[RMDB]
RNA sequence: GGGAACGACUCGAGUAGAGUCGAAAAAGCAGGUUGAUAAAAUGGGUCAGUGAUGGAAAGGUUGGCAUAUUGGGGCAGCACAUCAGCAUGUCCAUGUUAACGAAAAACAUGUACAGGGCCCCUUCUGCAUACCAGGCACCACCCCGUCCCAGUGGGAGAUUCCAUGUGAGUUCGCUCACAUGGAAUCAAAAGAAACAACAACAACAAC
Reactivity to 2A3 in 0.01 (KOAc 150mM, MgCl2 10mM, bicine 150mM(pH8.5), 24C), signal-to-noise 2, nucleotides 027 to 156: a000g130c060a060g080g020u130u100g070a090u130a120a140a010a040u090g020g000g020u060c070a050g020u060g090a090u040g040g030a030a140a110g070g020u050u040g070g010c010a010u040a090u120u100g000g010g010g010c010a010g040c010a030c030a220u260c060a000g030c060a080u010g000u000c020c000a010u010g010u010u080a150a070c090g110a130a020a000a040a000c000a010u020g000u020a000c010a030g110g030g030c000c000c030c000u010u020c010u000g010c000a010u010a070c010c020a040g100g030c000a000c020c000a010c010c000c000c000g010u010c020c000c010a010g020u090g030g050g010a080